An RNA of 207 nucleotides, treated with 2A3 and read out base by base. The reactions ran in a buffer of 150 mM KOAc, 10 mM MgCl2 and 150 mM bicine (pH 8.5), at 24 C. Values cover nucleotides 27 to 156. For 2A3, 328 sequencing reads were counted.
RNA sequence: GGGAACGACUCGAGUAGAGUCGAAAAGAGCGAUUAGACAAAGGGGUAGAGCUACAUAUUAGAUAGCUGUAUAAUCGUUCAAGUUACAUCACAACAUCUUCAAUAUUUAUUACUUACUUUCCUUUCUGCCAGAGUACGGUAUUCGUACCGUACUCAAACAGGUCAUUCUCUUCGGAGAAUGACCUGUAAAAGAAACAACAACAACAAC
Reactivity to 2A3 in 0.01 (KOAc 150mM, MgCl2 10mM, bicine 150mM(pH8.5), 24C), signal-to-noise 1, nucleotides 027 to 156: g010a000g020c000g000a020u000u000a000g020a040c120a030a160a180g000g000g050g000u030a000g020a000g080c000u000a000c000a110u250a120u010u170a100g120a280u030a000g000c000u020g020u040a000u000a040a010u000c000g000u010u000c000a050a000g020u090u090a110c070a030u150c080a070c020a220a130c000a030u150c060u220u100c060a220a190u130a270u270u170u020a190u120u170a060c040u060u040a020c020u000u050u260c000c030u040u130u120c010u070g120c050c070a000g000a000g000u000a000c000g000g000u000a030u000u050c040g010u010a000c000c000g020u010a000c000u000c000a000a000